[RMDB]
RNA sequence: GGGAACGACUCGAGUAGAGUCGAAAACCAUUCCUUAUACCUUGAGUAUUGCUGAAUUCAGUUUAGCGUGCAUGCUCUUGGCUAUUCUCAUAGUGAUUGUCAAAUUUUGAGUUACUUAUUCGUCAAUAAAACACUACCACGUUCGCGUGGUAGUGAACGUACUCUAAGUGUUCGCACUUAGAGUACGAAAAGAAACAACAACAACAAC
Reactivity to DMS in 0.01 (KOAc 150mM, MgCl2 10mM, bicine 150mM(pH8.5), 24C), signal-to-noise 2, nucleotides 027 to 156: c030c030a300u000u000c040c000u000u000a210u000a020c000c010u000u010g020a030g010u000a050u000u010g050c000u000g020a050a100u010u010c170a180g030u000u000u000a050g000c070g020u020g060c140a280u000g000c000u010c030u000u020g020g000c040u000a130u000u000c030u000c050a150u000a090g030u000g020a110u010u000g000u000c040a080a080a120u000u000u000u010g020a130g030u000u000a050c110u000u000a160u000u000c100g040u000c050a050a090u000a000a120a080a190c000a010c010u000a030c010c000a020c000g030u010u000c300g000c000g060u000g000g040u000a010g020u000g000a020a000
Reactivity to 2A3 in 0.01 (KOAc 150mM, MgCl2 10mM, bicine 150mM(pH8.5), 24C), signal-to-noise 6, nucleotides 027 to 156: c020c000a020u070u090c020c010u090u160a070u050a140c000c010u020u030g010a020g000u040a060u160u100g030c010u040g040a170a120u160u180c090a120g130u060u080u170a080g010c060g030u050g020c030a020u000g000c000u000c000u000u010g000g000c000u040a060u150u040c060u020c060a080u110a060g090u080g110a140u090u160g110u090c060a040a090a110u100u120u100u120g050a050g020u060u050a070c050u100u110a070u170u180c060g080u050c100a110a090u090a160a110a010a010c000a000c000u000a000c000c000a000c020g000u020u030c140g000c010g110u000g000g010u000a000g000u010g000a000a000